[RMDB]
RNA sequence: GGGAACGACUCGAGUAGAGUCGAAAACAAGAUUACAGGAAGCUUGGAUAAAAGUCAUGGUUACGGAAGCAAGCGAAUGAGAUGACUCGGCUACUGUAAACCGAAACCGAGCUGAAAUAGGCAGCUGGUUUGAUCAUUGAUUCGUCAAUGAUCAAACAAAAGAAACAACAACAACAAC
Reactivity to DMS in 0.01 (KOAc 150mM, MgCl2 10mM, bicine 150mM(pH8.5), 24C), signal-to-noise 7, nucleotides 027 to 126: c130a090a100g010a140u030u010a050c080a080g020g010a120a040g010c020u010u010g040g030a120u030a060a070a120a100g020u000c060a030u020g010g010u000u000a060c040g000g000a130a090g010c110a100a070g020c050g010a080a070u020g010a120g020a100u010g000a070c030u000c050g000g000c010u000a080c010u000g010u000a010a040a070c040c040g020a070a060a090c020c010g000a040g000c000u000g000a060a060a080u020a050g010g000c030a020g010c030u000g010
Reactivity to 2A3 in 0.01 (KOAc 150mM, MgCl2 10mM, bicine 150mM(pH8.5), 24C), signal-to-noise 9, nucleotides 027 to 126: c030a010a060g050a130u070u080a030c010a010g000g090a120a040g040c030u110u150g070g050a100u170a240a220a020a000g040u020c010a020u120g130g040u100u130a050c030g030g050a060a050g060c090a060a020g110c050g090a090a070u170g050a110g050a130u080g040a050c000u000c040g010g000c000u010a010c000u030g000u030a030a050a050c050c040g030a050a010a020c020c030g010a000g000c000u010g020a080a100a070u120a060g110g000c020a000g010c010u070g040